[RMDB]
The data come from the RNA Mapping Database (RMDB), library OK2TST.
Structure probing data (DMS) for a 177-nucleotide construct.
DMS adducts were read by reverse transcription with MarathonRT.
The reactions ran in a buffer of 150 mM KOAc, 10 mM MgCl2 and 150 mM bicine (pH 8.5), at 24 C.
RNA sequence: GGGAACGACUCGAGUAGAGUCGAAAAGCACCGCGGUGUUAUCGCCCAGCUGAUCCCCGAUGCCGUGCACCACACUGCCCAUCACCAGCCCGUACAGGCACAGGCCGACGGUCCACAACAGCAGGGAUGACACCUAGGUCUUCGGACCUAGGUGUCAAAAAGAAACAACAACAACAAC
Reactivity to DMS in 0.01 (KOAc 150mM, MgCl2 10mM, bicine 150mM(pH8.5), 24C), signal-to-noise 1, nucleotides 027 to 126: g020c060a140c030c090g030c160g060g010u000g000u000u000a110u010c060g010c000c010c080a190g000c030u000g000a140u000c000c000c010c060g000a120u000g000c030c050g000u000g000c020a070c010c020a080c060a010c050u020g030c040c000c010a100u000c100a080c150c050a100g000c040c000c040g020u010a030c150a110g050g030c010a020c250a090g010g070c030c010g000a090c000g000g000u010c030c000a030c030a070a060c020a070g000c040a060g000g000g000a170